Overview: The record gives the reactivity of an RNA of 207 nucleotides to 2A3 and DMS. The 2A3 profile rests on 628 reads. 2A3 adducts were read by reverse transcription with SuperScript II with manganese. The data come from the RNA Mapping Database (RMDB), library OK3TST.
[RMDB]
RNA sequence: GGGAACGACUCGAGUAGAGUCGAAAAGCUGCACACAGCCCACACCUGGAUUCCAGGAGAUGCUUGCCCCUUCUCUGCUUUGACAAACUGGAGCACAGGCUGCCCCUGCAAGUUACCUCCCCACUCUCCACUGGGAGAUCAGCAAGUCUCGGGGGUACGAUUAAAUUACCUUCGGGUAAUUUAAUCGAAAAGAAACAACAACAACAAC
Reactivity to 2A3 in 0.01 (KOAc 150mM, MgCl2 10mM, bicine 150mM(pH8.5), 24C), signal-to-noise 1, nucleotides 027 to 156: g000c020u060g000c090a040c010a000c010a090g070c060c020c000a050c020a010c000c000u050g070g040a250u200u070c030c000a000g090g020a050g050a060u140g090c110u090u160g050c020c000c000c010u070u020c000u000c010u040g060c030u110u080u130g040a070c000a030a140a000c040u020g030g000a010g030c040a010c010a030g020g000c020u020g030c040c010c030c000u000g000c000a030a060g020u050u090a040c000c000u000c000c000c000c000a050c010u020c000u010c010c000a110c040u020g030g060g000a010g000a000u000c000a010g090c000a040a110g030u040c020u020c070g000g000g020g000g010u010a010
Reactivity to DMS in 0.01 (KOAc 150mM, MgCl2 10mM, bicine 150mM(pH8.5), 24C), signal-to-noise 1, nucleotides 027 to 156: g020c060u000g030c050a150c080a120c070a110g220c020c000c010a070c140a150c050c070u000g020g010a240u000u000c050c010a060g000g020a140g000a190u000g010c040u000u000g060c030c030c020c000u000u000c020u000c020u020g000c020u000u030u020g020a130c030a040a120a100c020u000g020g000a050g000c090a140c090a080g020g020c070u010g020c000c020c010c020u000g000c050a070a170g000u010u000a060c030c010u000c000c000c000c000a070c060u010c040u000c020c020a100c150u000g010g020g030a050g010a040u000c050a080g060c060a090a190g000u020c080u000c010g000g020g000g020g010u010a050